[RMDB]
RNA sequence: GGGAACGACUCGAGUAGAGUCGAAAACACACGGAGGUAGCAGAGAAAUCACCUCCAGAGGACCCCUUCAGCGAACAGAGAGCGCCAGACGCGAUAGGAGUAAGACCAUAGCGAUGGGGGGAGAUGCGAUUAUAAUAUCCUUCGGGAUAUUAUAAUCAAAAGAAACAACAACAACAAC
Reactivity to 2A3 in 0.01 (KOAc 150mM, MgCl2 10mM, bicine 150mM(pH8.5), 24C), signal-to-noise 3, nucleotides 027 to 126: c030a000c010a000c050g020g000a010g010g030u160a090g090c160a070g040a020g080a250a110a070u060c010a000c000c020u000c000c000a000g010a020g020g080a050c040c000c000c000u040u090c060a020g000c010g030a060a030c030a080g100a020g000a020g220c010g020c000c040a090g050a200c020g010c020g040a030u120a100g030g000a040g030u080a100a030g070a070c030c000a050u060a020g000c020g030a060u050g000g000g000g010g020g020a080g000a040u150g050c030
Reactivity to DMS in 0.01 (KOAc 150mM, MgCl2 10mM, bicine 150mM(pH8.5), 24C), signal-to-noise 3, nucleotides 027 to 126: c060a090c160a150c120g010g000a030g000g000u000a130g040c160a110g000a140g020a060a100a140u010c010a070c030c010u000c020c000a060g000a130g010g010a110c010c010c010c040u000u000c120a060g010c020g010a020a110c100a100g000a130g000a140g010c040g000c020c070a080g000a080c040g010c020g000a120u010a100g010g010a070g000u000a060a080g010a100c030c020a060u010a120g010c030g010a150u000g000g000g000g000g000g010a100g010a070u020g010c260